[RMDB]
RNA sequence: GGGAACGACUCGAGUAGAGUCGAAAAACGGGCAGUGGCGAUGGCAACGCGGCAGCCGCAGGGUCGACUUCUUCGCAGCCGCAACAGACGGGCAACGGGCAAAGAGGGGUUCUCGUUCUGUUGGAAGCUACCUCCUAGCUUUCGAGCUAGGAGGUAGAAAAGAAACAACAACAACAAC
Reactivity to 2A3 in 0.01 (KOAc 150mM, MgCl2 10mM, bicine 150mM(pH8.5), 24C), signal-to-noise 3, nucleotides 027 to 126: a000c050g020g020g000c020a060g020u040g100g000c030g030a090u080g070g000c040a050a050c080g020c010g070g000c010a010g020c050c020g000c030a020g000g000g030u040c010g060a060c040u080u030c010u040u060c060g000c040a030g020c030c010g010c010a010a010c000a010g040a040c000g020g000g000c010a030a020c030g010g040g010c050a100a110a010g080a070g010g010g000g000u020u020c020u010c020g050u080u010c000u010g010u010u000g020g030a030a010g030
Reactivity to DMS in 0.01 (KOAc 150mM, MgCl2 10mM, bicine 150mM(pH8.5), 24C), signal-to-noise 1, nucleotides 027 to 126: a130c150g000g000g070c020a070g070u030g000g030c100g020a120u020g040g000c090a080a050c070g000c020g030g040c000a110g180c000c020g000c170a070g000g000g010u000c050g000a130c050u020u030c080u000u010c100g070c010a120g000c010c000g030c000a030a020c050a010g020a010c050g000g000g000c130a030a000c040g000g000g070c080a100a060a060g050a010g000g020g000g040u010u000c000u000c000g000u050u060c060u000g000u030u000g020g000a090a110g030
Annotation:
An RNA of 177 nucleotides, treated with 2A3 and DMS and read out base by base. For DMS the reverse transcriptase was MarathonRT. 2A3 adducts were read by reverse transcription with SuperScript II with manganese. Conditions: 150 mM KOAc, 10 mM MgCl2 and 150 mM bicine (pH 8.5), 24 C. Source: RMDB library OK1LIB, as collected in RNAgym.